[RMDB]
RNA sequence: GGGAACGACUCGAGUAGAGUCGAAAACAGCAAGGUACGGGUCGGUGACGAAGUCCUCGCGGUCGGCGCGCCCCUGGGGCUGCGCAGUACGGUGACCCAGGGCAUUGUCAGCGCGCUACACCGCCCCCGUAUGAUAACGGUUCGCCGUUAUCAUACGAAAAGAAACAACAACAACAAC
Reactivity to DMS in 0.01 (KOAc 150mM, MgCl2 10mM, bicine 150mM(pH8.5), 24C), signal-to-noise 7, nucleotides 027 to 126: c100a110g000c110a070a050g010g000u000a070c100g010g000g010u000c020g010g010u000g010a110c060g000a080a120g010u000c030c030u010c150g010c050g010g010u000c130g010g020c010g020c010g000c010c010c010c020u010g010g000g010g000c020u000g010c040g030c070a070g010u020a150c070g000g000u000g000a190c010c010c010a020g010g000g010c170a100u000u000g000u010c300a140g000c010g020c020g010c000u000a090c150a030c020c010g000c010c020c010c030
Reactivity to 2A3 in 0.01 (KOAc 150mM, MgCl2 10mM, bicine 150mM(pH8.5), 24C), signal-to-noise 7, nucleotides 027 to 126: c040a010g100c060a060a110g110g030u140a060c060g010g000g070u040c030g030g040u060g030a040c040g050a080a030g050u020c010c030u070c060g030c040g020g000u040c050g020g000c000g000c010g010c010c000c010c010u020g010g000g020g000c030u050g010c170g000c030a020g070u140a060c040g020g030u060g130a090c000c000c010a000g020g010g000c110a180u050u230g090u120c030a040g010c000g000c010g020c000u020a020c020a010c060c010g020c000c000c000c000

This 177-nucleotide RNA was probed chemically with DMS and 2A3. The reactions ran in a buffer of 150 mM KOAc, 10 mM MgCl2 and 150 mM bicine (pH 8.5), at 24 C. For 2A3, 15,873 sequencing reads were counted. Values are in units of 0.01, from 0 to 300, in steps of 10. For DMS, 10,041 sequencing reads were counted. DMS adducts were read by reverse transcription with MarathonRT.